The data come from the RNA Mapping Database (RMDB), library 15KLIB. Structure probing data (2A3 and DMS) for a 170-nucleotide construct. 2A3 adducts were read by reverse transcription with SuperScript II with manganese. For DMS, 15,421 sequencing reads were counted.
[RMDB]
RNA sequence: GGGAACGACUCGAGUAGAGUCGAAAAACCGUCCCCCUCGGUAAUGGCGAAUGGGACCCAGAUCUCUCUCUAGCUUCCGAUAGAGAAGCGAGAGAAAGCUGGCUCUCCCUUAGCCAUCCGAGGUGACCUAUCAGUUCCUUCGGGAACUGAAAAAGAAACAACAACAACAAC
Reactivity to 2A3 in 0.01 (KOAc 150mM, MgCl2 10mM, bicine 150mM(pH8.5), 24C), signal-to-noise 5, nucleotides 027 to 129: a000c040c020g030u050c010c040c000c010c000u000c000g000g020u090a110a050u020g000g000c020g040a040a040u030g000g010g000a020c040c000c000a020g010a110u030c030u000c000u000c000u000c020u120a040g000c000u010u000c010c000g270a240u160a200g080a020g000a020a000g000c010g000a000g000a000g000a010a010a000g020c000u000g010g000c000u000c000u000c000c000c000u000u010a010g000c000c010a000u000c000c000g000a000g000g000u000g000a010c010c010u070a060
Reactivity to DMS in 0.01 (KOAc 150mM, MgCl2 10mM, bicine 150mM(pH8.5), 24C), signal-to-noise 4, nucleotides 027 to 129: a050c080c120g030u050c000c000c000c000c000u000c020g030g050u070a060a020u020g000g000c020g010a120a070u050g000g010g000a050c240c000c000a020g010a030u030c000u020c010u010c010u010c040u020a100g050c000u030u010c010c020g120a230u070a180g030a140g040a000a000g000c020g010a040g020a000g020a030a070a000g050c030u020g000g020c010u020c070u030c000c020c050u010u000a240g050c000c000a020u000c000c000g000a030g030g040u020g040a070c090c090u040a080